[RMDB]
RNA sequence: GGGAACGACUCGAGUAGAGUCGAAAAGACAAUGUGAACAGAACCCCAAAGGGUUGUACCCCAAAGGUGGUUGUUGUAAAUUUUGUUCCUCUGUACAUCAUUUAGCAAAGGAUUGUGAUCAAGUGAACAAGGAUGAUGUUUCCUUUGGCCAUGUUGAGCUAAAAUUAGCAUUCGUGCUAAUUUUAGCAAAAGAAACAACAACAACAAC
Reactivity to 2A3 in 0.01 (KOAc 150mM, MgCl2 10mM, bicine 150mM(pH8.5), 24C), signal-to-noise 3, nucleotides 027 to 156: g040a010c020a010a080u130g070u030g110a100a030c020a040g010a030a000c020c000c010c000a030a090a040g070g020g010u110u120g040u250a140c010c020c000c000a070a040a040g070g000u080g030g000u010u010g010u020u010g030u050a090a170a110u070u140u050u060g000u010u030c000c020u030c100u080g070u050a050c000a020u040c020a020u050u060u170a040g080c060a110a050a020g010g010a060u130u100g060u050g030a040u100c070a070a060g070u090g200a100a010c030a050a060g130g000a030u070g010a020u030g100u030u030u030c030c000u050u090u060g030g020c000c010a050u060g020u000u070g030a020
Reactivity to DMS in 0.01 (KOAc 150mM, MgCl2 10mM, bicine 150mM(pH8.5), 24C), signal-to-noise 2, nucleotides 027 to 156: g030a080c000a100a060u010g010u000g040a120a140c010a300g020a030a100c020c000c020c020a080a270a130g010g000g030u000u000g020u010a300c050c010c000c030a040a160a080g000g060u000g000g080u000u000g020u000u000g010u010a050a080a170u000u000u010u000g010u020u000c000c000u000c030u000g020u000a090c050a150u000c000a080u000u000u000a080g040c070a020a060a060g020g000a100u000u000g010u010g020a100u000c020a100a100g040u010g030a060a130c130a110a050g030g010a110u000g000a150u000g020u000u000u000c000c010u000u000u020g000g000c040c050a020u000g010u000u010g000a170